[RMDB]
RNA sequence: GGGAACGACUCGAGUAGAGUCGAAAAUCUGCAGGACCUAACUGAGUAACGGCUGUGAAGGUGCCGUGACCAGCAGAGCUGAAAGCUGCCCAGGCACAGCUCACACGCUCCCCACCGGACUCCUGGGUCUCUACUAGGGGUUCGCCCCUAGUAGAGAAAAAGAAACAACAACAACAAC
Reactivity to DMS in 0.01 (KOAc 150mM, MgCl2 10mM, bicine 150mM(pH8.5), 24C), signal-to-noise 2, nucleotides 027 to 126: u000c070u000g040c070a060g020g000a090c090c050u000a160a120c070u010g010a110g010u000a060a030c040g010g010c040u020g000u000g040a080a100g010g020u000g020c000c030g000u000g000a040c050c040a030g010c130a110g010a040g000c010u020g010a060a110a070g000c010u000g000c010c020c020a200g000g010c040a080c020a010g010c030u000c010a120c140a150c180g000c040u000c040c010c010c050a060c140c110g000g020a090c160u000c010c030u000g000g010g000
About this RNA: This 177-nucleotide RNA was probed chemically with DMS. For DMS the reverse transcriptase was MarathonRT. Source: RMDB library OK2TRN, as collected in RNAgym. The DMS profile rests on 1,625 reads.